[RMDB]
RNA sequence: GGGAACGACUCGAGUAGAGUCGAAAAGCGGUUCACGGAUCGAGGAAAUGCGAAUAAUGCAACCGCGGGCAUUAACAUUAGCCAACUGAACGAUCGCGGGCCAGAGCCGAAGACGAUCGGAUCCGACAUGGGGAGUAAUGUUCGCAUUACUCCCCAUAAAAGAAACAACAACAACAAC
Reactivity to DMS in 0.01 (KOAc 150mM, MgCl2 10mM, bicine 150mM(pH8.5), 24C), signal-to-noise 4, nucleotides 027 to 126: g040c030g000g030u010u000c060a180c110g020g020a080u000c010g010a110g010g000a080a010a070u050g000c090g000a050a100u040a100a030u010g010c050a020a040c010c020g000c030g050g000g000c010a070u020u030a130a190c080a100u030u000a090g010c000c000a150a130c170u010g020a100a120c040g000a020u010c000g020c020g010g020g000c050c130a140g010a150g010c010c000g000a130a060g010a100c040g010a010u000c030g010g000a060u010c000c010g000a160c200
Reactivity to 2A3 in 0.01 (KOAc 150mM, MgCl2 10mM, bicine 150mM(pH8.5), 24C), signal-to-noise 3, nucleotides 027 to 126: g000c010g010g040u100u120c070a050c080g000g030a030u010c000g000a060g020g080a140a000a070u090g060c030g020a100a080u130a130a030u150g020c000a040a030c000c010g000c060g000g000g000c010a040u110u130a180a050c000a110u040u180a050g000c000c020a010a100c060u110g080a030a000c000g010a020u040c000g000c020g070g020g020c040c080a100g000a020g080c000c000g050a140a050g050a120c030g000a020u010c000g000g020a040u000c000c010g000a040c060